[RMDB]
An RNA of 177 nucleotides, treated with DMS and read out base by base. The DMS profile rests on 878 reads. The data come from the RNA Mapping Database (RMDB), library TTRINS.

RNA sequence: GGGAACGACUCGAGUAGAGUCGAAAAGAUAUGGACGAUCUACCCACCAGCUCAGGGACAAUGAUGAGCCAGACCUCGGAAACGAGGUCUGGCUUUGAGUCCUAGAGCUGAGGAUCGUCCUAAGUCAGUAUAAGCCUGAGUUCGCUCAGGCUUAUACAAAAGAAACAACAACAACAAC
Reactivity to DMS in 0.01 (KOAc 150mM, MgCl2 10mM, bicine 150mM(pH8.5), 24C), signal-to-noise 2, nucleotides 027 to 126: g040a120u020a090u010g000g040a000c010g010a000u000c020u000a150c080c010c040a300c150c010a040g000c000u000c000a300g000g020g020a010c000a180a210u000g040a140u030g000a000g010c010c000a020g000a020c000c000u010c020g010g000a030a080a130c000g020a000g020g000u000c000u020g000g000c000u000u000u000g000a150g050u000c000c000u010a120g020a000g000c000u000g020a050g060g000a000u000c000g000u010c000c000u000a000a080g030u000c110a150